[RMDB]
RNA sequence: GGGAACGACUCGAGUAGAGUCGAAAACUGCAGCGGGAAGUAAGCCACAACCCAGAAUGCAGCAACGAAGGAGAGGCCUGAUGCGCUGGUUAUCACCCCAUCAGCUGGCUUACCGUACAGCGAAGUGUAUACGAGGGUACUUCGGUACCCUCGUAUAAAAAGAAACAACAACAACAAC
Reactivity to DMS in 0.01 (KOAc 150mM, MgCl2 10mM, bicine 150mM(pH8.5), 24C), signal-to-noise 4, nucleotides 027 to 126: c000u000g000c040a100g010c030g000g000g000a150a300g010u020a050a050g010c060c060a030c050a110a220c030c000c030a030g030a070a090u010g000c070a020g000c100a100a060c070g010a200a070g010g000a080g020a110g020g000c030c050u000g020a040u010g000c070g000c040u000g010g030u010u030a040u050c070a190c030c010c030c050a060u010c040a140g000c070u000g010g020c020u020u010a070c070c050g000u030a150c030a070g030c010g010a100a140g000u020g010
Reactivity to 2A3 in 0.01 (KOAc 150mM, MgCl2 10mM, bicine 150mM(pH8.5), 24C), signal-to-noise 3, nucleotides 027 to 126: c000u010g000c020a030g030c020g050g020g030a040a010g030u060a000a040g080c000c010a020c030a050a010c000c000c000a010g060a080a040u060g030c010a000g020c010a040a060c050g110a260a060g050g060a080g020a050g040g080c020c030u070g010a020u030g000c070g000c060u060g000g010u090u050a140u100c020a080c030c000c000c000a020u050c020a000g030c030u020g050g000c000u040u020a090c060c030g060u150a100c040a000g070c000g040a090a010g070u070g030